Record summary:
An RNA of 177 nucleotides, treated with 2A3 and DMS and read out base by base. The RNA was probed in 150 mM KOAc, 10 mM MgCl2 and 150 mM bicine (pH 8.5) at 24 C. For 2A3 the reverse transcriptase was SuperScript II with manganese. The DMS profile rests on 6,402 reads. DMS adducts were read by reverse transcription with MarathonRT.

[RMDB]
RNA sequence: GGGAACGACUCGAGUAGAGUCGAAAAAAUGCAUCAGACAUAGCACAUCAAAUAGCUCAUGACUCAGCAAAAGACGUGUUAUUGCGAGGAGCAGUCGGUUCUGGUAAGUCGACGGGUCUGCCAUACGCUCAAGACCUCUAUUCGUAGAGGUCUUGAGAAAAGAAACAACAACAACAAC
Reactivity to 2A3 in 0.01 (KOAc 150mM, MgCl2 10mM, bicine 150mM(pH8.5), 24C), signal-to-noise 7, nucleotides 027 to 126: a000a010u120g000c020a170u030c010a020g040a040c000a030u030a010g000c020a000c000a050u040c010a030a100a220u090a050g000c010u030c040a100u220g080a220c050u050c200a010g000c020a020a030a000a030g050a010c030g020u050g030u050u030a040u050u240g000c020g020a050g070g020a010g040c010a020g030u040c020g010g000u040u000c010u050g060g070u100a070a040g060u080c030g030a030c000g020g030g010u000c000u030g000c020c000a120u150a090c090g000
Reactivity to DMS in 0.01 (KOAc 150mM, MgCl2 10mM, bicine 150mM(pH8.5), 24C), signal-to-noise 4, nucleotides 027 to 126: a080a070u010g020c030a090u010c040a070g000a200c050a030u000a020g000c010a010c040a050u010c030a050a050a080u020a090g010c010u010c140a080u010g000a090c160u030c300a040g020c060a010a060a180a040g000a000c080g010u000g000u000u000a000u020u010g020c050g000a250g000g010a070g040c010a020g000u000c010g010g000u000u000c050u010g010g010u020a080a070g010u010c020g020a090c060g010g000g000u000c000u020g000c000c020a100u030a130c190g020